[RMDB]
RNA sequence: GGGAACGACUCGAGUAGAGUCGAAAAGAUAUGGACCUAAAUGAGGGAGCUCCAGGUCGGAAACGACCUGUGAGCUUUGAUCUCAUGGGUCCUAAGUCAAACAACUACGUCUUCGGACGUAGUUGAAGCAUAUCUAAAUGUUCGCAUUUAGAUAUGCAAAAGAAACAACAACAACAAC
Reactivity to 2A3 in 0.01 (KOAc 150mM, MgCl2 10mM, bicine 150mM(pH8.5), 24C), signal-to-noise 5, nucleotides 027 to 126: g010a010u010a010u050g000g000a000c000c020u100a270a250a190u300g000a010g000g020g020a020g010c000u000c000c000a000g000g010u000c000g010g000a070a010a000c000g000a000c000c040u040g020u040g000a000g000c000u010u030u010g000a000u000c000u000c010a120u140g030g000g000u000c000c000u000a000a000g000u000c030a100a070a130c010a000a020c010u000a000c010g000u000c000u050u100c300g190g000a010c000g000u000a000g000u000u010g000a010a010
Reactivity to DMS in 0.01 (KOAc 150mM, MgCl2 10mM, bicine 150mM(pH8.5), 24C), signal-to-noise 7, nucleotides 027 to 126: g000a010u000a050u010g000g000a020c000c000u000a040a090a070u010g000a020g000g000g000a010g020c000u000c010c010a010g010g010u000c000g010g000a010a010a040c000g010a010c000c000u000g010u010g010a000g020c000u000u000u010g000a040u010c000u000c000a080u000g010g020g020u000c000c000u000a000a060g000u000c000a170a160a300c010a000a010c000u000a000c000g000u000c000u000u020c250g030g000a010c000g010u000a000g000u000u000g000a080a120